[RMDB]
Structure probing data (2A3 and DMS) for a 177-nucleotide construct.
RNA sequence: GGGAACGACUCGAGUAGAGUCGAAAAGAUAUGGACUGAGACAUGCCUUAAGGGUCGGAAACGACCUGAAGGGCAACAGCUCACAUGUCCUAAGUCAAAGUCUAGUAACCUUCGGGUUACUAGACAACACCUAUUCUGAGUUCGCUCAGAAUAGGUGAAAAGAAACAACAACAACAAC
Reactivity to 2A3 in 0.01 (KOAc 150mM, MgCl2 10mM, bicine 150mM(pH8.5), 24C), signal-to-noise 5, nucleotides 027 to 126: g030a010u070a060u170g010g010a010c020u050g000a010g010a040c050a100u070g000c010c010u030u020a080a040g000g000g000u010c020g010g040a100a070a050c020g010a020c000c000u010g000a020a040g010g000g000c010a010a000c020a010g000c010u010c010a110c030a090u220g000u000c000c010u040a130a040g050u050c060a160a110a000g000u000c000u000a000g000u010a010a010c000c010u030u100c300g020g000g000u000u000a000c000u000a000g000a000c010a000a000
Reactivity to DMS in 0.01 (KOAc 150mM, MgCl2 10mM, bicine 150mM(pH8.5), 24C), signal-to-noise 6, nucleotides 027 to 126: g010a050u000a300u010g000g020a030c020u010g000a080g010a070c100a270u000g020c000c000u010u000a070a300g010g010g020u000c010g000g000a090a110a230c000g010a000c000c000u000g000a180a110g010g000g010c000a020a060c160a100g000c030u000c000a080c200a080u010g010u000c000c010u010a040a100g010u000c050a070a110a140g000u000c000u000a000g000u000a000a010c000c000u000u000c250g030g010g010u000u000a000c000u000a000g000a000c000a030a110

The data come from the RNA Mapping Database (RMDB), library TTRDEL. For 2A3, 15,955 sequencing reads were counted.